Conditions: 150 mM KOAc, 10 mM MgCl2 and 150 mM bicine (pH 8.5), 24 C. An RNA of 177 nucleotides, treated with 2A3 and DMS and read out base by base. For 2A3 the reverse transcriptase was SuperScript II with manganese. Reactivities are given for positions 27 through 126. In probing experiments dimethyl sulfate is read out at A N1 and C N3, which are open when not base-paired.
RNA sequence: GGGAACGACUCGAGUAGAGUCGAAAAGAUAUGGAUAUCCUAGUACUCGCAGACGAGGCUGUGUUAAUCGGAAACGAUUAACACAGCUACCCACCGUCUGAACUACGAGGACCGGAUAUCCUAAGUCCAUUACUUAGACGUUCGCGUCUAAGUAAUGAAAAGAAACAACAACAACAAC
Reactivity to 2A3 in 0.01 (KOAc 150mM, MgCl2 10mM, bicine 150mM(pH8.5), 24C), signal-to-noise 2, nucleotides 027 to 126: g020a010u060a010u130g000g000a000u000a000u000c010c020u030a010g010u000a010c000u010c010g000c020a000g000a010c010g080a300g210g000c010u010g000u000g010u000u010a000a000u000c020g000g000a030a020a030c010g000a000u000u010a000a010c010a010c000a000g010c000u000a000c020c030c020a060c010c010g000u000c000u010g010a040a030c100u160a050c180g000a000g010g000a010c010c000g000g010a000u000a000u000c000c000u000a050a000g010u010c020
Reactivity to DMS in 0.01 (KOAc 150mM, MgCl2 10mM, bicine 150mM(pH8.5), 24C), signal-to-noise 7, nucleotides 027 to 126: g020a060u010a300u010g010g000a030u010a000u000c000c000u010a060g020u000a180c010u000c000g000c010a020g010a010c010g020a120g010g020c000u010g020u000g010u000u000a010a010u010c000g020g010a130a080a200c000g010a010u000u000a010a010c000a000c010a010g000c010u000a010c090c090c130a300c130c000g000u010c010u000g000a060a060c160u030a300c030g000a020g000g000a070c300c220g000g000a020u000a000u000c010c000u000a010a100g000u000c020